[RMDB]
RNA sequence: GGGAACGACUCGAGUAGAGUCGAAAAAGGUUUCGACGGGGAUAGGAAACUAAAGGUUGCAUGCCGAGGUCCGGGCUGGCCUCGUUAAAAAGCCCGGGGCGAAUUACACGCCGAUAAUUACGACUACGCCGUAGCAGCUUAAUACCCUGCUACCGAUGAUCCUGUUAUUCUUCGGAAUAACAGGAUCAAAAGAAACAACAACAACAAC
Reactivity to 2A3 in 0.01 (KOAc 150mM, MgCl2 10mM, bicine 150mM(pH8.5), 24C), signal-to-noise 1, nucleotides 027 to 156: a000g050g010u020u010u010c050g010a020c040g010g010g000g000a020u050a030g030g010a050a030a050c020u090a110a060a000g050g000u050u020g060c080a070u080g030c040c000g000a000g010g000u000c000c000g000g000g000c010u050g080g000c010c000u020c010g040u060u020a040a000a000a000a000g010c000c000c000g010g000g000g000c030g010a120a040u160u070a130c090a020c020g000c010c020g040a030u130a110a040u180u120a060c080g060a040c060u090a030c070g070c100c050g000u000a000g010c010a000g000c010u000u000a030a000u050a020c000c000c000u000g000c000u020a020c010c010g050a040u080